The record gives the reactivity of an RNA of 207 nucleotides to 2A3. Reactivities are rounded to 0.1 and cut off at 0 and 3. Reactivities are given for positions 27 through 156. The RNA was probed in 150 mM KOAc, 10 mM MgCl2 and 150 mM bicine (pH 8.5) at 24 C.
RNA sequence: GGGAACGACUCGAGUAGAGUCGAAAAACGAGGUACGCCUCGAAAAUAUGACCGGUGUCAUAGCCUCUAGCACACAGAGGUCGCGUGGGUUCAACUCCCCUCCUUUUCCGAGGGUAUCGGAAACCAAAAAACACAAUUUGGUUCGCCAAAUUGUGAACCCUUACCCCAUCUUCGGAUGGGGUAAGGGAAAAGAAACAACAACAACAAC
Reactivity to 2A3 in 0.01 (KOAc 150mM, MgCl2 10mM, bicine 150mM(pH8.5), 24C), signal-to-noise 1, nucleotides 027 to 156: a000c020g000a010g000g020u090a050c180g080c000c000u010c010g020a020a010a010a030u170a080u080g010a000c000c090g070g010u160g030u200c020a070u010a000g050c010c000u000c000u020a110g040c080a040c000a000c010a120g040a030g000g010u000c020g040c060g090u080g010g000g070u010u080c030a030a060c030u050c010c000c000c000u110c000c000u080u150u020u000c000c010g000a000g000g040g030u100a060u000c000g000g010a000a000a010c000c020a080a130a020a020a050a000c010a000c010a010a010u020u000u010g040g000u020u030c100g010c030c000a000a000a000u000u000g000u000g000a000a020